The data come from the RNA Mapping Database (RMDB), libraries RFM100 and RFMREP. Chemical mapping of a 177-nucleotide RNA with DMS and 2A3. Reactivities are rounded to 0.1 and cut off at 0 and 3. The reactions ran in a buffer of 150 mM KOAc, 10 mM MgCl2 and 150 mM bicine (pH 8.5), at 24 C. Reactivities are given for positions 27 through 126. 2A3 adducts were read by reverse transcription with SuperScript II with manganese. High DMS reactivity at an A or C suggests that its Watson-Crick edge is free.

RNA sequence: GGGAACGACUCGAGUAGAGUCGAAAACUAAGACAGUGCUGACGUCGACAACGUCUUAGAAAGCCAACCUUCAAAGACAGCCGUGACGUCAACACCGUCUUUGAAGCCUGGUUUUCUAAGACGGUCGACGUUCUGUUUCCUUCGGGAAACAGAACGUAAAAGAAACAACAACAACAAC
Reactivity to DMS in 0.01 (KOAc 150mM, MgCl2 10mM, bicine 150mM(pH8.5), 24C), signal-to-noise 9, nucleotides 027 to 126: c040u010a070a070g010a110c170a070g010u010g010c080u010g010a060c040g010u000c000g000a020c010a100a130c030g010u000c000u000u000a010g000a010a010a010g010c000c000a010a100c280c000u000u000c000a000a010a010g000a010c010a080g030c190c220g020u000g000a120c220g010u040c220a070a080c020a050c020c060g000u000c000u000u000u000g000a000a000g010c300c150u000g000g000u000u000u000u000c000u000a000a000g000a010c000g000g000u000c010g000
Reactivity to 2A3 in 0.01 (KOAc 150mM, MgCl2 10mM, bicine 150mM(pH8.5), 24C), signal-to-noise 9, nucleotides 027 to 126: c030u060a080a020g130a040c080a070g090u080g110c060u110g050a050c040g020u010c010g010a000c020a220a120c020g000u000c000u000u000a000g000a010a000a000g010c000c000a010a020c020c000u000u000c000a000a000a000g000a010c020a030g120c140c100g040u040g070a180c100g150u170c050a050a010c000a000c000c010g000u000c000u000u000u000g000a000a000g000c010c030u020g000g000u010u000u000u000c000u000a000a000g000a000c000g000g000u010c000g010